This 177-nucleotide RNA was probed chemically with 2A3 and DMS. The 2A3 profile rests on 5,053 reads. Reactivities are given for positions 27 through 126. For DMS, 776 sequencing reads were counted.

[RMDB]
RNA sequence: GGGAACGACUCGAGUAGAGUCGAAAACAGAUGAUGUUCGCAUCAUCUGAAAUAAAAGCCAUGCAGGUAGGAAGGAGCAUGGCAACCAACCAACCAAAAUAAAAAUCUGUUCCUUCGGGAACAGAAAGUAAUCAUUUCACUUCGGUGAAAUGAUUACAAAAGAAACAACAACAACAAC
Reactivity to 2A3 in 0.01 (KOAc 150mM, MgCl2 10mM, bicine 150mM(pH8.5), 24C), signal-to-noise 3, nucleotides 027 to 126: c000a010g000a000u000g000a000u000g020u060u060c200g010c110a010u000c000a010u010c000u010g000a000a010a000u060a000a060a000a010g000c000c000a000u000g000c020a020g300g000u300a040g200g110a110a020g040g040a040g000c000a000u000g000g000c000a000a020c010c000a000a020c000c010a010a050c010c020a010a060a100a050u280a060a130a050a010a040u010c000u000g000u000u010c000c000u000u030c280g070g000g000a000a000c000a000g000a000a000a000
Reactivity to DMS in 0.01 (KOAc 150mM, MgCl2 10mM, bicine 150mM(pH8.5), 24C), signal-to-noise 1, nucleotides 027 to 126: c040a000g000a000u000g020a020u010g000u000u020c190g010c010a020u000c000a000u000c000u000g000a030a020a100u000a050a060a060a110g020c000c010a000u010g010c000a030g010g040u000a080g010g030a110a090g000g010a200g000c030a000u000g000g000c000a030a030c040c040a060a120c090c100a050a110c120c090a080a010a080a000u030a020a050a040a130a040u000c000u000g000u020u000c000c000u000u000c120g040g000g000a020a000c000a000g010a030a010a070